[RMDB]
RNA sequence: GGGAACGACUCGAGUAGAGUCGAAAAUUGGUCGUUGGCGCAACCCCAACAAAAAGUGUAGCACUUCAGCCUACCGUUAUUCCCGAAAGCACAGAUCUCGAACGCUCGAACCAAGCCGUGGAAAUCGAUCGCAUAUGGCGUUCGCGCCAUAUGCGAUAAAAGAAACAACAACAACAAC
Reactivity to 2A3 in 0.01 (KOAc 150mM, MgCl2 10mM, bicine 150mM(pH8.5), 24C), signal-to-noise 2, nucleotides 027 to 126: u000u040g070g010u020c050g070u040u030g030g000c080g030c050a010a180c000c040c090c080a020a030c060a080a210a000a000a030g150u060g000u030a060g010c000a000c050u130u130c020a020g000c040c020u020a010c010c010g120u020u070a120u060u040c080c070c000g000a110a250a000g070c030a000c030a090g100a090u000c070u000c080g040a060a010c050g030c000u000c020g030a060a070c010c000a050a060g040c000c000g010u080g060g090a000a050a050u030c040g030
Reactivity to DMS in 0.01 (KOAc 150mM, MgCl2 10mM, bicine 150mM(pH8.5), 24C), signal-to-noise 1, nucleotides 027 to 126: u000u000g000g010u000c010g040u010u000g020g000c030g000c270a050a300c060c020c040c030a260a000c210a120a170a080a150a060g020u000g000u000a080g070c090a010c070u000u000c210a070g070c190c070u000a030c010c060g060u040u020a240u000u000c000c000c000g000a000a000a100g070c060a060c070a060g000a170u090c090u040c040g000a050a090c000g120c000u030c000g000a060a120c000c040a000a150g000c000c070g000u000g040g040a060a000a190u000c150g030
This 177-nucleotide RNA was probed chemically with 2A3 and DMS. The RNA was probed in 150 mM KOAc, 10 mM MgCl2 and 150 mM bicine (pH 8.5) at 24 C. The DMS profile rests on 988 reads. Reactivities are given for positions 27 through 126. It was measured as part of the RMDB library OK1LIB.